RNA sequence: GGGAACGACUCGAGUAGAGUCGAAAACCCCGUGUGGAACACACGACUAAGCUUCGGCUUAGUAAGAGCAACUUAGGAUGAUAGGCUCCCCGGCGUGUCUCGAACCAUGCCGGGCCAAACCCAUAGGGCUGGCGGUCCCUGUGCGGUCAUUAUUCAACCCUAAUACCAGCUUCGGCUGGUAUUAGGGAAAAGAAACAACAACAACAAC
Reactivity to 2A3 in 0.01 (KOAc 150mM, MgCl2 10mM, bicine 150mM(pH8.5), 24C), signal-to-noise 2, nucleotides 027 to 156: c000c000c010c000g030u050g000u010g080g230a190a030c060a000c000a010c130g020a000c020u000a000a000g040c000u030u170c270g110g000c030u040u000a020g000u010a000a100g030a000g000c020a030a200c060u100u140a070g100g000a060u100g020a040u090a080g040g000c000u000c010c010c000c000g000g000c000g030u020g020u010c050u030c200g080a040a010c030c000a000u030g010c010c000g010g000g010c010c000a000a000a000c000c000c000a000u020a000g000g000g000c020u040g130g110c090g000g080u040c000c000c010u000g010u020g000c140g060g010u030c030a090u010u110a100u050u080c010a030a060

This 207-nucleotide RNA was probed chemically with 2A3.
It was measured as part of the RMDB library OK3TST.
The reactions ran in a buffer of 150 mM KOAc, 10 mM MgCl2 and 150 mM bicine (pH 8.5), at 24 C.